[RMDB]
RNA sequence: GGGAACGACUCGAGUAGAGUCGAAAAUGACGGUAGAUGAGUGUGGAUGGAGUGAGAGGAGGAGUCCUGUGUAUGUCGUUGUCAACGUCGACCGAGCGUCCGUGCCAAGCGCUGCGUCACCAGGGGAUGACUGUCGGAAGAUGGUCAGUCCCGGGUGCAUGUCACGAGUCUUCGGACUCGUGACAUGAAAAGAAACAACAACAACAAC
Reactivity to 2A3 in 0.01 (KOAc 150mM, MgCl2 10mM, bicine 150mM(pH8.5), 24C), signal-to-noise 2, nucleotides 027 to 156: u130g020a000c030g030g040u060a050g030a120u050g030a070g060u060g020u060g100g010a050u040g060g010a070g010u070g010a060g000a050g020g030a040g000g040a000g040u030c020c030u050g010u020g030u030a090u110g020u040c020g030u000u040g040u070c030a090a020c110g030u040c030g050a100c100c000g020a010g000c000g040u040c020c010g060u100g030c030c020a090a080g030c030g010c020u150g040c010g050u060c010a000c010c000a030g000g000g000g010a000u010g000a000c000u010g020u000c000g020g080a060a060g000a040u030g000g000u020c010a010g110u040c010c000c000g010g000g000u010g000